This 207-nucleotide RNA was probed chemically with 2A3 and DMS.
[RMDB]
RNA sequence: GGGAACGACUCGAGUAGAGUCGAAAAGGCUAUGACUCGUGUCCGUCGGCGUAGCCGACAACAUGCCCGGGUAGCCCAGACCUUCAAGGCUACGGUGCGUUGCGACGCACGGUCUGAUUCUUCACAAAGUAGUCCCGAGUCUUCGGACUCGGGACAAUCUUUAGCAAUAGUUCGCUAUUGCUAAAGAAAAAGAAACAACAACAACAAC
Reactivity to 2A3 in 0.01 (KOAc 150mM, MgCl2 10mM, bicine 150mM(pH8.5), 24C), signal-to-noise 1, nucleotides 027 to 156: g030g000c040u040a030u180g030a040c030u020c020g000u010g000u000c030c030g000u000c000g010g040c260g210u140a050g010c000c020g020a010c020a020a050c060a080u240g010c000c010c020g020g050g000u010a000g000c010c050c020a030g000a030c010c000u000u000c030a010a010g000g000c000u000a010c000g040g000u000g000c010g000u000u070g060c150g070a000c000g010c000a010c000g000g000u000c000u000g020a070u070u020c070u070u090c140a090c100a300a120a050g040u140a120g000u040c030c000c040g000a000g000u010c010u020u080c230g070g000a000c020u000c000g050g000g000a000c000a000a000
Reactivity to DMS in 0.01 (KOAc 150mM, MgCl2 10mM, bicine 150mM(pH8.5), 24C), signal-to-noise 1, nucleotides 027 to 156: g010g010c000u010a010u010g000a090c030u020c030g000u000g000u000c020c130g020u010c010g020g030c010g040u000a130g000c000c020g020a070c000a030a030c050a050u000g010c040c000c030g070g060g030u000a030g010c000c020c210a160g080a060c010c050u000u020c060a070a300g000g000c020u000a040c000g020g020u000g000c030g060u000u030g020c180g030a230c040g000c000a040c040g010g010u000c010u020g030a180u000u000c000u000u000c030a110c070a070a130a200g010u000a210g000u000c000c000c000g010a010g010u000c000u000u020c300g060g000a040c010u010c000g000g010g000a000c000a000a000

Source: RMDB library M2RFPK, as collected in RNAgym. The 2A3 profile rests on 821 reads. The reactions ran in a buffer of 150 mM KOAc, 10 mM MgCl2 and 150 mM bicine (pH 8.5), at 24 C. 2A3 adducts were read by reverse transcription with SuperScript II with manganese. The DMS profile rests on 2,610 reads.